[RMDB]
RNA sequence: GGGAACGACUCGAGUAGAGUCGAAAAGAUAUGGAGCCACCAGGCCACUGGUUACAGACAUGCUGGCUGGGUCGGAAACGACCUGGUCAGCAACAGCUGUAACCAGUGGCCUGUUGGCUCCUAAGUCGAAUUAUGUUAUGUUCGCAUAACAUAAUUCAAAAGAAACAACAACAACAAC
Reactivity to DMS in 0.01 (KOAc 150mM, MgCl2 10mM, bicine 150mM(pH8.5), 24C), signal-to-noise 3, nucleotides 027 to 126: g020a100u010a300u010g010g010a020g000c000c000a000c050c000a020g000g020c000c010a000c020u000g000g000u010u000a000c000a010g000a060c100a270u000g010c000u000g000g000c000u000g000g030g000u000c000g000g000a090a110a230c010g010a000c010c000u000g010g010u000c010a000g000c010a010a010c300a160g010c010u010g010u000a010a010c010c000a010g030u000g000g000c000c000u010g010u000u000g000g000c000u000c000c000u000a010a060g020u010c110
The record gives the reactivity of an RNA of 177 nucleotides to DMS. Values cover nucleotides 27 to 126.